[RMDB]
RNA sequence: GGGAACGACUCGAGUAGAGUCGAAAAAGUGAUGAUGAGUUUUUGGCAGCCGUUACCAACGCACACCGUUAUGAUGUGCUGUUGAGUGAGGUUUCCUUUAAUAAUUUUAUCACUAGUUAUGCUAAGCCUGAAGAAAAAUUGUCAGCAUUUGACUGCGCUAGUACAGUCGUUUCGACGACUGUACUAGAAAAGAAACAACAACAACAAC
Reactivity to 2A3 in 0.01 (KOAc 150mM, MgCl2 10mM, bicine 150mM(pH8.5), 24C), signal-to-noise 4, nucleotides 027 to 156: a000g020u020g010a030u000g010a010u020g020a020g150u030u010u000u060u010g010g000c040a000g030c010c030g050u100u090a020c000c000a000a010c000g020c010a000c010a000c000c030g070u130u150a110u300g080a070u020g000u000g000c140u170g000u000u010g040a130g010u010g010a020g030g000u020u020u020c000c000u030u020u010a020a030u040a000a030u020u070u090u150a030u020c000a000c010u010a030g070u120u130a090u180g030c060u070a050a070g000c010c010u040g070a110a080g080a090a130a060a130a130u200u130g060u100c060a040g000c080a190u070u070u270g060a050c030u040g000c010g000
Reactivity to DMS in 0.01 (KOAc 150mM, MgCl2 10mM, bicine 150mM(pH8.5), 24C), signal-to-noise 1, nucleotides 027 to 156: a040g020u000g030a020u000g030a040u010g000a300g000u000u000u000u000u000g000g040c060a060g000c010c030g020u000u010a020c000c000a060a000c040g060c000a040c000a020c020c000g040u000u000a200u000g020a000u000g020u000g020c020u020g100u020u000g000a090g050u000g020a070g000g030u000u010u000c000c010u000u000u000a030a090u010a060a220u000u000u020u000a060u000c000a030c020u000a140g000u000u000a040u010g000c020u000a130a140g000c060c000u000g020a120a080g000a080a060a050a080a130u000u020g030u000c040a090g000c060a130u000u010u030g040a090c070u010g000c050g040

Annotation
An RNA of 207 nucleotides, treated with 2A3 and DMS and read out base by base. For 2A3 the reverse transcriptase was SuperScript II with manganese. Source: RMDB library OK3TST, as collected in RNAgym. For 2A3, 1,629 sequencing reads were counted. Values cover nucleotides 27 to 156. For DMS the reverse transcriptase was MarathonRT.